Conditions: 150 mM KOAc, 10 mM MgCl2 and 150 mM bicine (pH 8.5), 24 C. An RNA of 177 nucleotides, treated with 2A3 and DMS and read out base by base. It was measured as part of the RMDB library OK1LIB. For DMS, 55,334 sequencing reads were counted.

[RMDB]
RNA sequence: GGGAACGACUCGAGUAGAGUCGAAAAGGAGCUCGAUGCUAGAUGGUUCCAUAACCUUAUGGGAUCACUACUUUACGUUAGUAGAGUAGUAUCAUGAUAAGGUUAUCAUGAUAUCUAGCAUCGAGGAGAUAGGAUUCAUAUUCGUGUGAGUUCUAUCAAAAGAAACAACAACAACAAC
Reactivity to 2A3 in 0.01 (KOAc 150mM, MgCl2 10mM, bicine 150mM(pH8.5), 24C), signal-to-noise 9, nucleotides 027 to 126: g130g010a070g040c000u000c000g000a000u000g000c000u000a000g000a000u000g020g020u010u000c010c000a000u010a110a240c060c070u120u060a000u000g010g000g000a000u000c010a000c010u000a000c000u010u010u000a010c030g180u110u260a060g000u020a000g000a000g000u000a000g000u000a000u000c000a000u010g020a000u010a040a130g300g020u160u020a010u000c000a000u020g000a000u000a000u000c000u000a000g000c000a000u000c000g000a000g000g000a000
Reactivity to DMS in 0.01 (KOAc 150mM, MgCl2 10mM, bicine 150mM(pH8.5), 24C), signal-to-noise 7, nucleotides 027 to 126: g000g010a150g010c000u000c000g010a010u000g000c000u000a000g000a000u000g000g010u000u010c010c050a010u000a030a110c190c150u030u000a010u000g010g000g000a000u000c020a010c000u000a000c000u000u000u000a000c000g010u040u060a080g010u000a000g000a000g010u000a000g010u000a000u000c000a000u000g000a010u000a020a190g030g010u040u010a010u000c010a010u000g000a020u000a000u000c000u000a000g000c000a000u000c010g010a000g000g010a070